[RMDB]
RNA sequence: GGGAACGACUCGAGUAGAGUCGAAAAACGCGGCGGUACGCCGCCGCGAACGGGGAAAAGCAGACUCCCGGCCUAUCCGGAACAUCCGCUGUUCCGGCCAAGACGGUGUCCCGUCCAAGUCCUGCAAUGGAUAUAAAUGCUUCGGCAUUUAUAUCCAAAAAGAAACAACAACAACAAC
Reactivity to 2A3 in 0.01 (KOAc 150mM, MgCl2 10mM, bicine 150mM(pH8.5), 24C), signal-to-noise 3, nucleotides 027 to 126: a000c020g010c010g020g050c050g040g030u100a090c300g120c050c020g000c010c010g000c010g010a000a020c020g010g000g010g020a050a180a070a050g010c030a010g000a010c010u030c010c000c000g000g000c040c000u060a060u050c000c000g000g000a010a000c000a020u090c100c220g040c260u040g000u020u000c010c020g000g000c050c030a070a010g020a000c000g020g010u060g090u140c010c000c010g000u000c020c000a020a030g030u130c010c020u010g010c010a030a150
Reactivity to DMS in 0.01 (KOAc 150mM, MgCl2 10mM, bicine 150mM(pH8.5), 24C), signal-to-noise 2, nucleotides 027 to 126: a090c000g060c020g020g020c000g060g030u040a090c170g000c040c000g090c000c040g030c000g010a040a020c050g000g030g010g000a090a120a110a140g010c040a000g060a100c010u020c050c010c000g000g000c060c040u000a150u030c000c010g000g000a000a010c020a020u030c250c140g000c190u000g000u000u000c000c000g040g000c260c120a050a130g000a060c020g010g000u020g060u010c010c030c000g000u010c010c100a050a050g000u020c070c030u020g010c050a120a180